Notes:
The data come from the RNA Mapping Database (RMDB), library OK2TST. The record gives the reactivity of an RNA of 177 nucleotides to 2A3 and DMS. The 2A3 profile rests on 979 reads. For DMS, 1,420 sequencing reads were counted.

[RMDB]
RNA sequence: GGGAACGACUCGAGUAGAGUCGAAAAGUCUUGCAGCACAUCCGCUUGUCUGAAGCUUAGAAUAGUGCGUCGUGUUGCAGUCGGUGACUGCCGAGGUGAGAAGGUUAUCGCGGCGCGACGUGCGGAGACCUUCGGGAGGGUUCGCCCUCCCGAAGGUAAAAGAAACAACAACAACAAC
Reactivity to 2A3 in 0.01 (KOAc 150mM, MgCl2 10mM, bicine 150mM(pH8.5), 24C), signal-to-noise 2, nucleotides 027 to 126: g010u000c040u060u070g080c010a000g040c000a010c030a080u030c020c070g020c090u100u110g040u030c020u090g110a130a010g020c020u050u030a130g090a140a160u090a170g050u020g040c030g000u000c000g000u020g050u050u130g070c060a010g020u060c050g150g120u220g000a020c030u060g010c000c030g130a070g110g070u090g000a050g040a220a150g150g050u040u010a020u090c040g000c010g000g000c020g030c000g000a000c000g000u030g020c010g000g000a060g060
Reactivity to DMS in 0.01 (KOAc 150mM, MgCl2 10mM, bicine 150mM(pH8.5), 24C), signal-to-noise 1, nucleotides 027 to 126: g000u000c020u000u010g010c060a070g010c120a070c070a100u000c020c080g040c040u010u010g010u000c020u000g010a120a040g000c050u000u000a100g000a100a110u010a100g060u000g010c040g020u000c010g030u020g010u000u010g030c010a060g000u000c010g050g010u000g020a020c040u000g010c100c040g000a110g020g040u000g000a150g000a090a100g020g000u000u000a040u000c020g000c000g000g000c010g090c020g000a040c030g010u010g000c000g000g000a140g000